[RMDB]
RNA sequence: GGGAACGACUCGAGUAGAGUCGAAAAAGGUACGUCGUGCCUUCAUUGAGGCUCAGGACGCCGAAUGUGGCGCCGCGAAGCUGCUCGGGUGUCGCUAUCGAUGGCUUGGCGAUCACGAAAUGCGGCACUACCGAGGGACUUUCGAGUCCCUCGGUAGAAAAGAAACAACAACAACAAC
Reactivity to DMS in 0.01 (KOAc 150mM, MgCl2 10mM, bicine 150mM(pH8.5), 24C), signal-to-noise 1, nucleotides 027 to 126: a030g020g030u000a030c040g010u000c170g050u000g010c000c010u000u000c130a100u010u000g010a190g010g020c000u000c080a250g000g000a060c010g010c000c000g010a060a090u010g010u010g000g000c000g010c010c020g000c020g000a080a060g000c050u000g020c050u000c040g000g000g000u000g000u000c000g000c020u000a260u000c280g010a070u030g010g000c040u000u000g000g000c050g000a060u010c050a050c050g000a070a050a120u000g000c000g010g000c010a130
Reactivity to 2A3 in 0.01 (KOAc 150mM, MgCl2 10mM, bicine 150mM(pH8.5), 24C), signal-to-noise 1, nucleotides 027 to 126: a010g020g000u060a040c090g210u080c070g030u110g020c020c000u040u000c030a200u040u140g050a050g050g000c040u070c080a020g060g080a120c020g020c030c000g040a120a060u280g070u210g060g000c040g000c000c020g140c110g070a070a030g000c030u030g020c070u040c020g060g000g000u030g000u000c000g000c010u060a050u080c050g110a120u030g020g000c000u110u100g180g090c030g070a060u040c000a010c070g030a010a100a010u120g000c020g020g000c000a030